[RMDB]
An RNA of 177 nucleotides, treated with DMS and 2A3 and read out base by base. For DMS, 602 sequencing reads were counted.
RNA sequence: GGGAACGACUCGAGUAGAGUCGAAAAUAAAAAUCCCAGCUGCCAUACCCACCAUCGACAGGAGUAUGAACGUGGCCACUGACACUACUACUACAGUCAUAGUGGGAUACAGCUCAUAACACAAAAAUCUCUAUGUUCAGUUCGCUGAACAUAGAGAAAAAGAAACAACAACAACAAC
Reactivity to DMS in 0.01 (KOAc 150mM, MgCl2 10mM, bicine 150mM(pH8.5), 24C), signal-to-noise 1, nucleotides 027 to 126: u000a090a100a050a040a160u000c020c000c020a070g010c020u000g000c130c070a120u000a050c010c010c000a000c000c060a010u000c160g040a030c020a080g000g000a150g010u000a010u020g000a050a040c270g000u000g010g000c030c150a120c140u000g040a020c020a030c010u000a230c130u000a000c060u000a110c010a080g020u000c000a030u000a000g010u000g000g000g000a060u000a050c020a000g000c020u000c280a050u020a040a000c080a090c070a050a150a090a080a080
Reactivity to 2A3 in 0.01 (KOAc 150mM, MgCl2 10mM, bicine 150mM(pH8.5), 24C), signal-to-noise 1, nucleotides 027 to 126: u050a040a070a020a000a020u050c000c000c000a000g000c010u000g010c040c090a190u160a300c020c000c000a010c020c000a030u030c110g010a010c000a020g060g060a020g050u050a060u220g040a120a030c070g010u000g080g070c100c080a100c060u100g060a030c000a000c020u060a020c030u040a010c010u020a020c060a020g000u000c000a000u020a070g000u000g000g000g030a000u020a000c000a000g030c000u010c030a180u140a050a060c060a000c030a070a080a000a000a000
For 2A3 the reverse transcriptase was SuperScript II with manganese.
It was measured as part of the RMDB library M2PK90.
The 2A3 profile rests on 843 reads.